Source: RMDB library OK3TST, as collected in RNAgym.
The record gives the reactivity of an RNA of 207 nucleotides to 2A3 and DMS.
For DMS, 22,335 sequencing reads were counted.
The reactions ran in a buffer of 150 mM KOAc, 10 mM MgCl2 and 150 mM bicine (pH 8.5), at 24 C.
RNA sequence: GGGAACGACUCGAGUAGAGUCGAAAACGUACGUGUUUUCACGUACGACGAGACUUUUGUCUCGGAUUGAGCCAACAUACAGGGCUCCCAUGCGAGGCGAUUGUCCUUAUUGUUCGGAUUGUCGCUUCUUCUCGUAUGGUACAACAGACUGUAUGAACACUAUACCUACUUUCGAGUAGGUAUAGUGAAAAGAAACAACAACAACAAC
Reactivity to 2A3 in 0.01 (KOAc 150mM, MgCl2 10mM, bicine 150mM(pH8.5), 24C), signal-to-noise 9, nucleotides 027 to 156: c010g000u010a000c010g010u030g030u050u130u160u300c010a000c000g000u000a000c000g000a010c000g000a000g000a000c040u180u230u300u300g000u000c000u020c010g000g020a080u080u140g020a010g020c010c010a040a060c000a130u010a000c000a000g000g010g050c010u060c100c000c000a000u000g000c000g000a000g030g000c000g000a000u010u050g010u000c000c010u140u220a250u170u300g180u150u230c070g000g000a000u000u040g010u000c000g000c000u120u070c000u100u050c000u010c000g000u000a000u000g010g040u040a050c040a050a020c020a030g120a050c000u010g000u000a000u010g030a040a000
Reactivity to DMS in 0.01 (KOAc 150mM, MgCl2 10mM, bicine 150mM(pH8.5), 24C), signal-to-noise 5, nucleotides 027 to 156: c020g030u010a010c010g020u000g000u000u000u000u010c020a010c000g020u000a010c000g010a060c010g010a050g000a020c000u000u010u000u010g040u000c010u000c020g010g000a120u000u010g010a130g020c030c010a140a230c030a030u000a030c020a030g010g010g010c010u000c090c010c010a030u000g010c020g010a050g030g020c020g010a030u000u000g010u010c000c010u000u000a130u000u010g020u000u000c220g010g010a050u000u010g020u000c000g010c010u010u000c060u000u010c050u000c010g030u000a010u000g010g020u010a080c080a100a160c140a110g010a250c010u000g010u000a010u000g010a150a300